Conditions: 150 mM KOAc, 10 mM MgCl2 and 150 mM bicine (pH 8.5), 24 C. Structure probing data (2A3) for a 177-nucleotide construct.
[RMDB]
RNA sequence: GGGAACGACUCGAGUAGAGUCGAAAAAGCGUCGGUAGUACGCUACCGACGCAAGUGAGUUUAGUGGAGUUUAAUGCUUCCCAUCGCCGACAAUUACGCGAAAGCUCUACCCAAACUCAUCCCCUAAGCAUUUUGGCAAGUUCGCUUGCCAAAAUGCAAAAGAAACAACAACAACAAC
Reactivity to 2A3 in 0.01 (KOAc 150mM, MgCl2 10mM, bicine 150mM(pH8.5), 24C), signal-to-noise 2, nucleotides 027 to 126: a000g000c000g000u000c000g000g000u000a000g000u000a000c160g050c120u000a000c000c000g000a000c000g000c000a000a000g010u020g000a000g000u000u040u050a010g000u020g010g010a020g000u010u070u150a280a070u260g030c010u080u080c000c020c000a030u060c020g020c050c000g070a130c040a160a120u200u120a060c090g000c000g120a090a000a000g000c010u000c000u010a000c010c010c000a020a000a000c020u020c020a100u040c000c000c000c020u050a150a000
Description: It was measured as part of the RMDB library RFM100.